An RNA of 177 nucleotides, treated with 2A3 and DMS and read out base by base.
Source: RMDB library TTRDEL, as collected in RNAgym.
RNA sequence: GGGAACGACUCGAGUAGAGUCGAAAAGAUAUGGAUCGUUCGAUGGGCCCGACGAUCUCGGAAACGAGGGAGGGUAGUCGAGACGAUCCUAAGUCAAAACGUCGGGCUGGUUCGCCAGCCCGACGAAUCCUACCUAUUGGUUCGCCAAUAGGUAGGAAAAAGAAACAACAACAACAAC
Reactivity to 2A3 in 0.01 (KOAc 150mM, MgCl2 10mM, bicine 150mM(pH8.5), 24C), signal-to-noise 2, nucleotides 027 to 126: g040a030u080a020u170g000g000a000u030c010g000u010u010c000g000a010u030g060g300g090c020c010c000g060a130c000g000a010u000c000u000c000g000g040a090a080a080c020g020a010g020g000g010a020g000g020g020u020a040g040u020c030g020a090g060a110c000g010a000u000c000c000u020a010a000g020u020c020a000a000a070a150c010g030u020c000g000g010g150c090u050g070g000u170u300c300g010c100c000a040g000c030c030c000g010a010c020g000a000a000
Reactivity to DMS in 0.01 (KOAc 150mM, MgCl2 10mM, bicine 150mM(pH8.5), 24C), signal-to-noise 2, nucleotides 027 to 126: g000a040u010a300u000g000g010a000u010c020g010u000u010c010g000a020u000g030g020g040c000c000c000g000a080c240g000a010u010c000u010c000g010g000a200a060a260c000g000a020g000g000g020a020g000g050g000u000a300g000u000c010g010a070g020a020c000g000a020u000c000c000u000a020a120g010u020c030a080a070a140a110c010g010u000c010g000g040g030c000u030g020g000u000u020c230g020c010c000a020g000c000c020c000g000a000c000g000a000a040
The reactions ran in a buffer of 150 mM KOAc, 10 mM MgCl2 and 150 mM bicine (pH 8.5), at 24 C. 2A3 adducts were read by reverse transcription with SuperScript II with manganese. 2A3 is a SHAPE reagent: it acylates the 2'-hydroxyl of flexible nucleotides of all four kinds.